[RMDB]
RNA sequence: GGGAACGACUCGAGUAGAGUCGAAAAUUUAAUCCCAACAAAGGGCCAAGAGGGACGGCAUCUUGGCCCAAGCCCAAAGAGCGAGACUCUAAAGGGAUGAGUCGUUCCCAACUCGCUCACAAUAUAACAUAAUGGUUUCGUUCGCGAAACCAUUAUGAAAAGAAACAACAACAACAAC
Reactivity to DMS in 0.01 (KOAc 150mM, MgCl2 10mM, bicine 150mM(pH8.5), 24C), signal-to-noise 1, nucleotides 027 to 126: u040u010u000a140a200u000c000c000c000a120a180c260a010a150a090g050g000g060c030c000a000a000g000a010g000g030g000a050c100g000g030c080a120u000c010u010u000g000g030c000c020c020a000a050g000c020c010c030a080a150a070g010a000g000c030g000a070g000a290c110u000c130u040a050a030a150g000g000g000a100u020g000a000g010u010c000g020u000u000c000c000c000a000a040c020u000c020g020c020u020c000a110c110a060a090u000a050u010a150a170